This 177-nucleotide RNA was probed chemically with DMS and 2A3. For DMS the reverse transcriptase was MarathonRT. Values cover nucleotides 27 to 126. 2A3 is a SHAPE reagent: it acylates the 2'-hydroxyl of flexible nucleotides of all four kinds. For 2A3 the reverse transcriptase was SuperScript II with manganese.
[RMDB]
RNA sequence: GGGAACGACUCGAGUAGAGUCGAAAAACGUCCGCGCAUUUUGACGGGACGCUGGAGUACGAGGUGCACAAUCUGUACGCGCUCUACCAGGCCAAGGCCACAGCUGAUGCCCUGCGCGCCAUCCGCCGCACACUACUCGGUUCGCCGAGUAGUGUGCAAAAGAAACAACAACAACAAC
Reactivity to DMS in 0.01 (KOAc 150mM, MgCl2 10mM, bicine 150mM(pH8.5), 24C), signal-to-noise 1, nucleotides 027 to 126: a220c070g000u010c020c020g050c040g050c070a260u000u000u020u000g000a180c060g030g000g020a050c070g010c060u000g000g020a130g050u010a020c100g020a040g010g010u000g040c030a020c100a130a060u000c190u020g030u010a090c010g000c020g000c010u020c030u010a070c070c060a160g010g010c030c100a080a120g020g010c030c000a130c040a110g000c040u020g010a120u000g000c040c030c030u000g020c030g000c110g000c000c000a090u040c030c070g030c140c070
Reactivity to 2A3 in 0.01 (KOAc 150mM, MgCl2 10mM, bicine 150mM(pH8.5), 24C), signal-to-noise 1, nucleotides 027 to 126: a000c020g060u050c050c010g030c010g010c100a050u040u080u110u300g090a070c040g060g030g010a000c000g000c010u000g020g030a080g050u030a010c120g040a060g090g060u030g010c040a040c060a100a090u090c080u070g020u030a000c030g030c010g070c070u020c010u030a080c040c080a010g000g000c000c000a090a060g080g090c010c070a050c020a010g110c040u060g030a180u180g130c000c020c000u050g000c050g000c000g020c020c000a060u100c040c020g000c010c100